Description
Structure probing data (DMS) for a 177-nucleotide construct.
[RMDB]
RNA sequence: GGGAACGACUCGAGUAGAGUCGAAAAGGCGAGGUUGGGGCUGUGGUGAAUAAUCCGGGGGUUGUCGCCCGUGCGCUCACCGAUGCUUUGAGUGAUGCUGCGAUGAAUCACGAGACUGUCGCAUGGACAUACCGCACGGGUUCGCCCGUGCGGUAUGAAAAGAAACAACAACAACAAC
Reactivity to DMS in 0.01 (KOAc 150mM, MgCl2 10mM, bicine 150mM(pH8.5), 24C), signal-to-noise 1, nucleotides 027 to 126: g010g000c070g040a120g010g010u010u000g040g000g020g020c050u000g010u020g000g000u000g000a060a040u000a090a120u020c080c060g000g000g000g000g010u000u000g030u000c050g000c010c020c030g020u010g010c060g010c050u000c040a030c020c050g010a090u000g000c080u000u010u000g030a170g020u010g000a040u000g000c060u000g010c110g030a100u010g000a060a040u000c020a060c060g000a160g000a070c080u000g000u000c030g010c020a090u000g010g000a290

Overview: The reactions ran in a buffer of 150 mM KOAc, 10 mM MgCl2 and 150 mM bicine (pH 8.5), at 24 C. Reactivities are rounded to 0.1 and cut off at 0 and 3. The DMS profile rests on 1,534 reads.